[RMDB]
RNA sequence: GGGAACGACUCGAGUAGAGUCGAAAAUCUUCCUUUCUUCCACCCACUGCUCGAGGAUCUCCUCCCUCCCCUUCGAGGAUUCCCCUGCGACGGGUAGGCUCAUCCUGAGACCGGGGAGCUUCGAAGAUAAUCAUAUCGUUCGCGAUAUGAAAAAGAAACAACAACAACAAC
Reactivity to 2A3 in 0.01 (KOAc 150mM, MgCl2 10mM, bicine 150mM(pH8.5), 24C), signal-to-noise 8, nucleotides 027 to 129: u040c010u070u140c020c000u040u070u030c030u050u000c010c020a040c010c010c010a040c010u020g010c010u010c010g010a010g030g030a070u020c010u010c030c000u010c000c000c000u020c010c010c000c000u000u000c000g010a010g010g050a170u060u050c000c000c000c000u030g020c020g080a070c030g030g000g000u030a080g120g030c030u050c060a100u060c010c000u050g020a050g030a110c010c030g000g000g000g000a010g010c000u000u000c000g010a000a000g000a010u150a040a120
Reactivity to DMS in 0.01 (KOAc 150mM, MgCl2 10mM, bicine 150mM(pH8.5), 24C), signal-to-noise 9, nucleotides 027 to 129: u050c110u020u010c030c020u020u050u010c040u030u020c000c030a130c000c000c000a100c080u000g040c000u000c000g030a000g010g000a140u030c060u000c040c000u010c000c000c000u020c000c030c040c000u040u020c040g030a000g020g030a100u020u000c010c000c000c010u000g000c000g040a300c130g030g000g020u030a080g000g040c070u000c110a110u040c030c020u040g030a180g000a230c120c030g060g050g000g000a040g030c030u010u010c030g020a040a020g010a090u030a080a130
The record gives the reactivity of an RNA of 170 nucleotides to 2A3 and DMS. The data come from the RNA Mapping Database (RMDB), library 15KLIB. DMS adducts were read by reverse transcription with MarathonRT. The 2A3 profile rests on 62,434 reads.